Source: RMDB library VIROID, as collected in RNAgym. Chemical mapping of a 177-nucleotide RNA with DMS. The RNA was probed in 150 mM KOAc, 10 mM MgCl2 and 150 mM bicine (pH 8.5) at 24 C. Reactivities are rounded to 0.1 and cut off at 0 and 3. For DMS the reverse transcriptase was MarathonRT.

[RMDB]
RNA sequence: GGGAACGACUCGAGUAGAGUCGAAAACGCAUGGGCAAGCAAAGAAAAAACAAGGCAGGGAGGAGACUUACCUGAGAAAGGAGCCACGGGGCAACUCUUCUCAGAAUCCAGCGAGAGGCGUGGAAGAUCAUACCGUACACUUCGGUGUACGGUAUGAAAAAGAAACAACAACAACAAC
Reactivity to DMS in 0.01 (KOAc 150mM, MgCl2 10mM, bicine 150mM(pH8.5), 24C), signal-to-noise 1, nucleotides 027 to 126: c070g010c030a070u000g010g010g040c040a110a090g020c010a010a080a080g080a000a050a120a140a140a070c040a060a040g040g020c000a040g000g030g010a220g000g000a060g010a070c050u000u000a050c120c010u000g000a020g010a020a030a030g000g000a240g010c010c070a110c300g030g010g010g030c130a020a100c030u000c140u000u010c000u000c000a020g000a070a070u000c020c000a060g010c030g000a150g000a110g010g000c090g040u020g040g050a010a110g000a190